Notes
This 207-nucleotide RNA was probed chemically with 2A3 and DMS. Conditions: 150 mM KOAc, 10 mM MgCl2 and 150 mM bicine (pH 8.5), 24 C. Values are in units of 0.01, from 0 to 300, in steps of 10. DMS adducts were read by reverse transcription with MarathonRT. The data come from the RNA Mapping Database (RMDB), library OK3TST.
[RMDB]
RNA sequence: GGGAACGACUCGAGUAGAGUCGAAAAAAGUGGUAAGUGUUUACAGUUUUCCACGCACUACUGAUCAGAGUACUGUUAAGCACCAACAGAAAAGGAAAGCUGCUAUAUAAUAGGGGUAUUCCUCAUAUAGGGGCAUUGGCAUACAGUCUCUCAUGCCCAAGCAGGUUAUAUUCGUAUAACCUGCUUGAAAAGAAACAACAACAACAAC
Reactivity to 2A3 in 0.01 (KOAc 150mM, MgCl2 10mM, bicine 150mM(pH8.5), 24C), signal-to-noise 5, nucleotides 027 to 156: a010a000g100u090g010g010u090a140a090g000u040g040u090u070u080a050c060a040g020u000u010u060u050c030c000a040c030g030c010a010c020u100a030c030u050g030a120u130c030a040g020a010g060u110a030c010u000g020u050u040a090a030g060c030a040c080c010a050a070c040a070g240a090a110a050a010g050g020a080a060a010g020c010u120g060c030u030a020u020a020u020a120a240u130a080g020g030g000g030u070a150u150u180c010c000u020c030a010u060a010u020a070g030g000g000g040c050a030u040u130g030g000c000a020u050a110c010a080g050u010c020u000c000u000c050a030u080g010c020c000
Reactivity to DMS in 0.01 (KOAc 150mM, MgCl2 10mM, bicine 150mM(pH8.5), 24C), signal-to-noise 4, nucleotides 027 to 156: a080a030g020u000g000g020u000a040a100g030u000g000u000u020u000a040c030a070g020u000u000u000u000c020c020a120c080g020c130a050c030u000a070c040u000g000a150u000c050a080g010a100g030u000a070c010u000g010u000u000a060a090g010c030a080c040c010a030a170c040a110g000a070a070a110a090g010g000a050a050a230g020c000u000g010c150u000a070u010a050u000a100a140u000a060g010g060g030g030u000a130u000u000c000c000u000c040a110u000a070u000a070g020g010g020g040c050a180u000u000g040g040c040a140u000a060c040a060g020u000c020u010c020u000c070a050u000g000c070c050